[RMDB]
RNA sequence: GGGAACGACUCGAGUAGAGUCGAAAAAUAUGUCAGUGGUCCCUGUAAGAGGAUCUAGGACAUAGGGAGGGUGGGUCAGAGCGCGGAUGCCCUAGAUCACGCGCGCGAGAAGUUAUGGGAACCACAACACUGAUGGAUCGUUCGCGGUUUGUUGGUGAAAAGAAACAACAACAACAAC
Reactivity to DMS in 0.01 (KOAc 150mM, MgCl2 10mM, bicine 150mM(pH8.5), 24C), signal-to-noise 1, nucleotides 027 to 126: a050u010a030u010g010u000c050a080g020u000g020g020u000c000c000c020u010g000u020a070a080g000a120g000g000a030u000c000u020a050g000g010a000c000a030u010a100g040g000g000a070g010g010g030u050g000g000g000u010c070a050g010a030g000c010g040c030g010g020a040u000g000c060c020c020u010a050g000a000u010c020a090c020g010c110g010c050g000c120g020a080g000a060a060g010u010u010a030u010g010g020g010a160a020c030c000a040c230a220a300